An RNA of 177 nucleotides, treated with DMS and read out base by base. For DMS the reverse transcriptase was MarathonRT. The DMS profile rests on 1,549 reads. Values cover nucleotides 27 to 126. It was measured as part of the RMDB library OK2TST. Conditions: 150 mM KOAc, 10 mM MgCl2 and 150 mM bicine (pH 8.5), 24 C.
RNA sequence: GGGAACGACUCGAGUAGAGUCGAAAAAUGUUGCGUCUCGUGUUCCAACCCUUCUAUGACGCCGAUAAUCCUGACACCAGCACGUCCAGGUUCCAAAAUAGGGCCACGGCUAUACCCACAGCAUAUCCAAACCGGGAUAUUUCGAUAUCCCGGUUUGAAAAGAAACAACAACAACAAC
Reactivity to DMS in 0.01 (KOAc 150mM, MgCl2 10mM, bicine 150mM(pH8.5), 24C), signal-to-noise 2, nucleotides 027 to 126: a030u010g000u000u000g010c040g010u010c020u010c060g020u000g000u020u000c030c040a120a140c090c020c030u010u020c100u010a100u010g020a070c020g010c000c040g020a080u010a110a080u010c030c030u000g010a090c050a070c050c050a040g030c080a090c100g000u000c030c050a080g000g000u000u010c020c050a070a040a090a090u010a090g030g000g000c040c060a040c070g000g010c040u000a090u000a100c000c000c000a050c140a060g010c060a080u010a050u020c080